Chemical mapping of a 207-nucleotide RNA with DMS and 2A3. It was measured as part of the RMDB library OK3TST. High DMS reactivity at an A or C suggests that its Watson-Crick edge is free. The DMS profile rests on 3,199 reads.
RNA sequence: GGGAACGACUCGAGUAGAGUCGAAAAAAAGUAUAAGUUAUGAUAAUUUGUUCGCCGAUAACUCUCUUCAAAUACAAGUGACCGGAAACUUUCGAUUGCAAGCUGUACGACGUACAACUUCAAGCAAGGGAGUACAACCAACAUUAGAGCUUGUGCAUAUUCUGUAUAAGUUCGCUUAUACAGAAUAAAAAGAAACAACAACAACAAC
Reactivity to DMS in 0.01 (KOAc 150mM, MgCl2 10mM, bicine 150mM(pH8.5), 24C), signal-to-noise 2, nucleotides 027 to 156: a140a100a120g000u000a030u000a030a070g000u010u000a070u020g000a220u010a050a050u000u000u000g010u010u000c080g020c020c020g060a180u020a060a070c030u000c030u010c030u000u010c060a060a060a120u010a100c050a060a070g030u010g010a060c070c050g010g010a080a100a070c030u000u000u000c000g010a050u000u000g000c020a100a080g030c030u000g020u000a040c000g010a140c220g020u000a010c000a010a020c010u000u010c030a060a070g000c070a060a050g000g000g000a070g000u000a070c070a070a130c040c020a050a050c040a110u000u000a080g000a160g000c030u000u000g000u000g030c030a220
Reactivity to 2A3 in 0.01 (KOAc 150mM, MgCl2 10mM, bicine 150mM(pH8.5), 24C), signal-to-noise 2, nucleotides 027 to 156: a010a000a000g050u060a090u090a140a030g010u060u160a080u170g080a150u090a260a110u120u090u150g020u050u070c050g040c090c010g060a090u060a120a080c010u010c040u050c000u160u140c070a080a090a070u130a180c030a110a010g030u020g040a020c030c090g050g000a050a070a060c040u070u060u060c050g070a090u000u140g020c040a000a010g000c000u010g000u030a020c050g120a090c120g280u010a020c010a010a010c000u040u080c030a010a060g000c010a010a000g040g000g010a010g020u000a010c020a060a020c020c020a020a070c010a090u050u170a070g010a020g080c020u040u020g000u030g010c000a050